Notes
Structure probing data (2A3) for a 207-nucleotide construct. 2A3 adducts were read by reverse transcription with SuperScript II with manganese. The 2A3 profile rests on 968 reads.

RNA sequence: GGGAACGACUCGAGUAGAGUCGAAAAGUGAUGCAGGCCGAGAGUGAGUCUUCUCUCGAAAAUCCUGGACUCAAAAAAUAAUAAGUGCAAACAACAUUGUACCUUUUGCUCGUAAGCAAGUAGCUGCUCUAGCUUAAUUGCAAAAACACCUCUUAUACGUCUGUACAAACUUCGGUUUGUACAGACGAAAAGAAACAACAACAACAAC
Reactivity to 2A3 in 0.01 (KOAc 150mM, MgCl2 10mM, bicine 150mM(pH8.5), 24C), signal-to-noise 2, nucleotides 027 to 156: g040u030g030a040u060g010c040a020g020g090c030c010g000a000g000a000g030u030g020a020g020u030c000u270u050c020u020c000u010c010g070a070a010a000a000u020c000c010u010g070g000a010c010u000c040a040a110a000a090a000a000u210a040a020u090a150a040g050u010g030c030a050a040a030c040a120a030c020a110u060u050g010u060a020c010c020u010u130u000u020g010c000u040c120g070u050a030a040g030c010a020a020g080u010a050g080c110u080g000c040u030c040u080a010g010c000u010u020a060a020u130u060g010c000a040a000a000a000a010c050a070c040c040u040c010u020u050a080u040a140